RNA sequence: GGGAACGACUCGAGUAGAGUCGAAAAAUCGAGCCUGCGCCCAGGUACGCGAGAGCCCUCCCCGACCGCGGAGGAAGGUCGAGAACCGGGUCUGUCGAAGAGUGCUUGUAUAGGGGGGUGGGGCGCGACGCGAAAUAUUAUUCGUAAUAUUUCGCGUAAAAGAAACAACAACAACAAC
Reactivity to DMS in 0.01 (KOAc 150mM, MgCl2 10mM, bicine 150mM(pH8.5), 24C), signal-to-noise 9, nucleotides 027 to 126: a110u010c070g000a090g010c020c020u000g020c060g010c010c010c010a140g020g010u000a040c060g000c030g000a080g010a110g010c020c010c010u000c030c010c010c020g010a030c040c040g020c110g010g010a120g020g010a100a090g000g010u000c010g010a070g000a070a070c090c140g000g000g010u010c020u000g010u000c020g000a100a100g010a130g010u000g000c020u000u000g010u010a120u010a150g020g010g000g000g000g020u010g000g010g010g010c020g010c040g010
Reactivity to 2A3 in 0.01 (KOAc 150mM, MgCl2 10mM, bicine 150mM(pH8.5), 24C), signal-to-noise 4, nucleotides 027 to 126: a010u070c030g010a030g020c010c020u070g060c030g050c010c000c000a020g030g030u060a030c050g010c020g050a060g010a020g100c000c010c000u020c020c010c000c010g020a040c020c020g040c080g100g010a070g070g080a100a050g030g010u040c020g020a030g010a130a040c060c020g020g000g060u040c040u060g120u050c030g030a060a020g060a030g070u080g010c020u120u120g110u140a160u180a160g020g010g010g000g010g010u050g030g010g010g000c010g000c020g010
Structure probing data (DMS and 2A3) for a 177-nucleotide construct. For DMS, 19,096 sequencing reads were counted. For 2A3, 10,596 sequencing reads were counted. Values are in units of 0.01, from 0 to 300, in steps of 10.